[RMDB]
RNA sequence: GGGAACGACUCGAGUAGAGUCGAAAAGCCAAGCGCGCGCCCUUCGCGCACAAUUGGCCUCUGUCCAUGCCAGUGCUGCUGCUGAUCACACCCUUGCAACCCUGGACAAGUUCAUUACCAGCACUGACAGCCUGGCUACAUUCGUGUAGCCAGGCUGAAAAGAAACAACAACAACAAC
Reactivity to DMS in 0.01 (KOAc 150mM, MgCl2 10mM, bicine 150mM(pH8.5), 24C), signal-to-noise 1, nucleotides 027 to 126: g010c030c000a060a010g070c210g040c110g020c040g010c120c150c300u030u000c150g000c020g070c010a000c010a040a280u000u000g000g000c000c010u010c240u000g000u000c040c080a250u000g010c020c050a030g000u000g000c010u000g000c150u000g010c130u030g000a060u000c070a080c160a080c060c020c020u020u000g000c070a130a100c110c020c010u000g020g000a050c040a070a060g000u000u000c110a070u000u030a160c110c020a010g010c050a060c000u000g000a050
Description
Chemical mapping of a 177-nucleotide RNA with DMS. The DMS profile rests on 593 reads.